Chemical mapping of a 177-nucleotide RNA with DMS and 2A3. DMS adducts were read by reverse transcription with MarathonRT. The 2A3 profile rests on 4,033 reads.

[RMDB]
RNA sequence: GGGAACGACUCGAGUAGAGUCGAAAAGAUAUGGAGACCCACUUCGCGGAUGCGUUGAAAUCGGAAACGAUGGAGCAUCCGACCCGAAUGGUCUCCUAAGUCAAACGCCAGAGUUCGCUCUGGCGAACGCAACAUUACAGUUCGCUGUAAUGUUGCGAAAAGAAACAACAACAACAAC
Reactivity to DMS in 0.01 (KOAc 150mM, MgCl2 10mM, bicine 150mM(pH8.5), 24C), signal-to-noise 2, nucleotides 027 to 126: g010a030u000a300u000g000g020a030g010a030c010c040c120a100c220u000u000c030g050c010g000g000a020u000g010c000g010u010u010g030a070a150a020u000c000g010g000a140a090a120c010g000a010u000g000g000a170g010c010a000u000c000c000g000a040c220c240c060g010a080a040u000g000g000u000c010u000c000c000u000a000a040g030u000c040a080a130a190c000g010c010c020a000g000a080g000u000u000c290g000c000u000c000u000g000g010c010g010a010a030
Reactivity to 2A3 in 0.01 (KOAc 150mM, MgCl2 10mM, bicine 150mM(pH8.5), 24C), signal-to-noise 2, nucleotides 027 to 126: g010a050u050a030u150g000g010a000g000a000c010c050c050a110c060u030u000c030g000c020g050g010a000u000g010c030g170u300u060g010a030a060a020u000c010g000g000a080a040a040c020g000a010u020g000g030a020g000c000a000u000c020c000g010a010c010c010c010g010a020a080u300g000g010u000c010u000c020c010u020a060a000g000u030c040a090a060a080c050g000c000c000a000g020a000g020u050u160c280g040c100u000c000u010g010g000c000g000a010a000